The data come from the RNA Mapping Database (RMDB), library TTRINS. This 177-nucleotide RNA was probed chemically with DMS. Reactivities are rounded to 0.1 and cut off at 0 and 3. Conditions: 150 mM KOAc, 10 mM MgCl2 and 150 mM bicine (pH 8.5), 24 C.

RNA sequence: GGGAACGACUCGAGUAGAGUCGAAAAGAUAUGGAUAUACCUUGGCGUUUCCGUCGGUGAACUACCACAGCAUAUCGGAAACGAUAUGGUGGCACCGAGCGGAAACGCCAAGGUAUAUCCUAAGUCACUAAAAUGAUAUGUUCGCAUAUCAUUUUAGAAAAGAAACAACAACAACAAC
Reactivity to DMS in 0.01 (KOAc 150mM, MgCl2 10mM, bicine 150mM(pH8.5), 24C), signal-to-noise 3, nucleotides 027 to 126: g010a040u000a300u010g000g010a010u000a020u000a010c000c010u000u000g000g010c000g010u000u000u000c000c010g040u000c000g000g010u000g000a090a070c140u010a300c050c020a010c030a100g020c040a010u000a010u000c010g000g010a170a100a300c000g000a000u000a000u000g000g020u010g000g010c000a000c000c000g000a080g000c010g010g010a010a000a010c000g000c000c000a010a000g000g000u000a000u000a000u000c010c000u000a010a060g010u000c040a300